[RMDB]
RNA sequence: GGGAACGACUCGAGUAGAGUCGAAAAGAAACGCAAGGCCGCUGACCAACGGGAUAUUGUGGGGCUUACCACAGGGGACGCGGCGUUAUCACUUGCCUUUUAAGCCGACCGUCUGGGCUGCAUACAAACCACCCAACUAUCUUCGGAUAGUUGGGAACUAGAAGUCAAUCUUCGGAUUGACUUCUAGAAAAGAAACAACAACAACAAC
Reactivity to 2A3 in 0.01 (KOAc 150mM, MgCl2 10mM, bicine 150mM(pH8.5), 24C), signal-to-noise 2, nucleotides 027 to 156: g030a030a040a010c050g010c030a000a010g100g020c000c030g020c010u090g090a040c000c000a050a140c090g110g060g000a110u150a100u180u120g000u020g010g010g070g090c130u110u150a050c010c010a020c020a020g000g000g000g030a000c020g010c020g020g010c010g030u030u040a010u040c020a020c080u000u020g010c010c020u020u140u030u060a060a010g010c020c010g070a130c040c010g090u090c060u100g040g010g000c010u020g000c020a090u090a130c040a040a050a020c050c010a030c010c010c000a000a000c000u000a000u010c000u010u010c090g100g000a000u000a010g000u010u000g000g010g000a000a000
Reactivity to DMS in 0.01 (KOAc 150mM, MgCl2 10mM, bicine 150mM(pH8.5), 24C), signal-to-noise 1, nucleotides 027 to 156: g040a040a090a080c090g050c020a060a090g010g020c020c030g000c000u000g040a300c010c030a020a100c000g000g030g020a140u010a050u010u060g010u000g000g030g020g030c190u000u000a050c000c080a060c000a060g010g010g000g010a200c120g010c060g000g000c030g020u000u010a050u000c100a100c040u000u000g030c020c040u030u020u010u010a060a090g040c020c000g020a100c030c030g040u000c050u010g010g010g060c050u000g000c050a120u000a100c090a080a100a130c020c040a130c010c000c000a000a010c000u000a000u010c000u000u030c300g040g000a040u000a000g040u010u010g010g000g000a000a010
Chemical mapping of a 207-nucleotide RNA with 2A3 and DMS.
For DMS the reverse transcriptase was MarathonRT.
For 2A3 the reverse transcriptase was SuperScript II with manganese.
It was measured as part of the RMDB library M2RFPK.
The 2A3 profile rests on 1,548 reads.
For DMS, 2,281 sequencing reads were counted.